RNA sequence: GGGAACGACUCGAGUAGAGUCGAAAAACAGCGAAAGGCACAAGACUUCGAACAUUAUAGCAGUUAGUAGUUGCCUAAACCCAUUGCAGUAUAUGGGACAGUAGAGGUCGCAAGCCUAUACUGUGCGAAAAGUCGCAAGGUUUCGACCUUGCGACAACCCAUCGCUUUGAUUCGUCAAAGCGAUGGGAAAAGAAACAACAACAACAAC
Reactivity to DMS in 0.01 (KOAc 150mM, MgCl2 10mM, bicine 150mM(pH8.5), 24C), signal-to-noise 1, nucleotides 027 to 156: a070c040a030g050c050g040a130a030a060g000g000c000a180c090a160a160g010a080c020u000u010c100g020a090a030c070a110u000u000a100u020a090g010c090a120g000u000u000a080g020u000a160g000u000u000g000c000c020u020a020a090a100c000c020c000a040u000u000g020c020a280g040u010a140u000a050u000g000g010g010a160c030a000g000u000a020g010a020g090g100u000c030g020c300a070a220g000c020c000u000a010u010a030c000u000g020u020g000c090g000a030a070a140a110g010u000c000g000c020a000a010g020g030u000u000u010c300g010a000c010c000u000u000g030c000g000a000c010a020a070
Reactivity to 2A3 in 0.01 (KOAc 150mM, MgCl2 10mM, bicine 150mM(pH8.5), 24C), signal-to-noise 3, nucleotides 027 to 156: a000c030a000g040c050g050a230a020a000g020g020c020a010c030a050a080g040a040c010u020u050c080g090a120a080c070a200u220u270a180u210a180g030c100a020g000u030u080a020g010u070a000g020u100u040g000c000c020u050a090a060a040c020c000c000a000u000u060g020c040a030g060u050a010u000a010u110g010g000g020a010c000a000g040u020a010g000a000g010g000u110c040g020c160a060a010g000c010c010u000a000u000a000c010u000g000u030g020c010g040a010a000a050a120g010u020c000g000c000a010a010g060g020u020u050u110c170g090a110c010c000u000u000g020c000g000a000c000a000a000

An RNA of 207 nucleotides, treated with DMS and 2A3 and read out base by base.
Reactivities are given for positions 27 through 156.
DMS adducts were read by reverse transcription with MarathonRT.
Source: RMDB library M2RFPK, as collected in RNAgym.
2A3 adducts were read by reverse transcription with SuperScript II with manganese.